[RMDB]
RNA sequence: GGGAACGACUCGAGUAGAGUCGAAAAUCAGGCAACUUCGGUUGCCUGAAAAUAAACUCGCCUAUAGCCAGGCGAGUACCAAAGCGGCUAAAGCAAUGGAAUAAACUGCCUCGUUCGCGAGGCAGAACAUUGUGACCAUGUUCGCAUGGUCACAAUGAAAAGAAACAACAACAACAAC
Reactivity to DMS in 0.01 (KOAc 150mM, MgCl2 10mM, bicine 150mM(pH8.5), 24C), signal-to-noise 2, nucleotides 027 to 126: u000c000a000g010g000c010a000a000c000u000u030c160g040g010u000u010g010c000c000u000g000a000a020a080a080u000a080a100a180c000u000c020g020c000c000u010a130u000a180g000c160c160a080g000g010c010g000a010g010u020a020c010c010a010a020a300g000c060g010g000c100u000a050a150a140g000c030a040a130u000g000g000a180a090u030a070a070a250c000u000g010c000c000u000c000g010u000u020c200g030c010g030a010g020g000c000a010g000a010a130
Reactivity to 2A3 in 0.01 (KOAc 150mM, MgCl2 10mM, bicine 150mM(pH8.5), 24C), signal-to-noise 2, nucleotides 027 to 126: u020c000a000g000g020c010a000a010c020u040u060c180g080g000u000u000g000c010c010u000g000a000a000a000a000u080a000a070a000c000u000c010g020c000c010u120a110u130a110g070c040c030a010g010g000c000g000a000g020u020a010c010c000a010a000a040g060c030g080g020c070u160a110a040a080g030c030a020a070u080g070g120a080a030u150a060a070a060c000u000g010c010c000u000c000g030u030u020c170g000c010g020a000g000g000c000a000g000a000a000
An RNA of 177 nucleotides, treated with DMS and 2A3 and read out base by base. The 2A3 profile rests on 3,259 reads. 2A3 adducts were read by reverse transcription with SuperScript II with manganese. The reactions ran in a buffer of 150 mM KOAc, 10 mM MgCl2 and 150 mM bicine (pH 8.5), at 24 C. The data come from the RNA Mapping Database (RMDB), library M2PK50. DMS adducts were read by reverse transcription with MarathonRT. Values cover nucleotides 27 to 126.